[RMDB]
RNA sequence: GGGAACGACUCGAGUAGAGUCGAAAAGUCAAGUUGUGUAGGAUAGGUGGGAGGCUUUGAAGUGUGGACGCCAGUCUGCAUGGAGCCGACCUUGAAAUACCACCCUUUAAUGGAAAAACAAAGUGAACCUAAAGGCUUGAUUCGUCAAGCCUUUAGGAAAAGAAACAACAACAACAAC
Reactivity to DMS in 0.01 (KOAc 150mM, MgCl2 10mM, bicine 150mM(pH8.5), 24C), signal-to-noise 3, nucleotides 027 to 126: g000u000c070a090a130g010u000u000g020u010g010u010a070g000g000a120u000a040g010g000u000g000g000g010a270g000g010c000u010u000u020g010a070a100g010u010g000u010g010g000a010c020g020c120c210a100g000u000c000u000g000c000a000u010g000g000a000g010c000c010g010a090c150c050u000u000g000a060a060a080u000a090c020c020a050c030c000c070u000u010u000a080a090u010g000g000a040a050a070a100a060c110a040a060a080g020u010g000a080a120
Background: An RNA of 177 nucleotides, treated with DMS and read out base by base. The RNA was probed in 150 mM KOAc, 10 mM MgCl2 and 150 mM bicine (pH 8.5) at 24 C. It was measured as part of the RMDB library M2PK90.